The record gives the reactivity of an RNA of 177 nucleotides to 2A3 and DMS. Values cover nucleotides 27 to 126. The reactions ran in a buffer of 150 mM KOAc, 10 mM MgCl2 and 150 mM bicine (pH 8.5), at 24 C. The 2A3 profile rests on 1,113 reads.
[RMDB]
RNA sequence: GGGAACGACUCGAGUAGAGUCGAAAAAUAGGUCUUCAAAUUGUUCAUUUGAAAAAAUUGAAACCCUUCUUAUUGGACGAUCAUGAUACUUCCCAAAAAUCGAAAUUCUUGAUCAAUGGAGGAACAAAGGUACGGAAAGUUUCGACUUUCCGUACCUAAAAGAAACAACAACAACAAC
Reactivity to 2A3 in 0.01 (KOAc 150mM, MgCl2 10mM, bicine 150mM(pH8.5), 24C), signal-to-noise 2, nucleotides 027 to 126: a000u090a010g060g010u010c040u070u020c010a000a000a100u160u170g010u050u060c030a040u010u070u140g070a100a040a020a000a060a100u100u300g070a060a100a110c040c000c060u080u000c030u070u110a180u080u220g100g050a070c070g030a000u000c020a110u180g000a010u030a030c010u040u070c000c000c010a000a020a130a000a000u110c090g050a040a000a030u160u050c020u000u080g030a030u060c040a000a050u140g060g030a080g000g050a020a000c020a090a140
Reactivity to DMS in 0.01 (KOAc 150mM, MgCl2 10mM, bicine 150mM(pH8.5), 24C), signal-to-noise 1, nucleotides 027 to 126: a070u000a060g000g010u020c110u040u020c000a000a060a030u010u060g000u000u010c050a090u000u000u010g000a000a000a110a000a050a030u000u000g010a190a000a060c120c060c020u010u000c030u000u000a130u000u010g000g020a110c150g000a020u000c060a040u030g020a000u040a040c170u000u000c000c000c010a020a050a170a020a100u020c110g020a020a040a150u000u020c000u000u010g000a060u000c040a030a030u030g000g000a040g000g020a020a010c250a000a010
The DMS profile rests on 1,208 reads.
It was measured as part of the RMDB library OK1LIB.